[RMDB]
RNA sequence: GGGAACGACUCGAGUAGAGUCGAAAAACGGGCACGUUCGCGUGCCCGUAAUGAACGCUGCAACGGGCAGAGAUCUCGCGAGAGCGCGAAUGCACAAAGAAACAUUUCCAGUUUUCGAACUGGAAAAUAUUUCGAGUACUUUCGAGUACUCGAAAUAAAAAGAAACAACAACAACAAC
Reactivity to DMS in 0.01 (KOAc 150mM, MgCl2 10mM, bicine 150mM(pH8.5), 24C), signal-to-noise 1, nucleotides 027 to 126: a040c000g010g000g010c000a020c020g040u000u000c210g020c000g080u000g030c000c010c000g040u010a020a040u000g000a160a040c050g010c040u000g020c060a150a100c050g020g000g000c040a180g010a080g010a120u000c000u000c040g000c030g000a240g000a050g000c000g020c070g000a120a030u010g010c090a060c150a030a070a120g000a060a040a110c160a070u000u000u000c000c000a060g000u000u000u000u000c120g010a030a010c000u000g020g000a010a000a020a100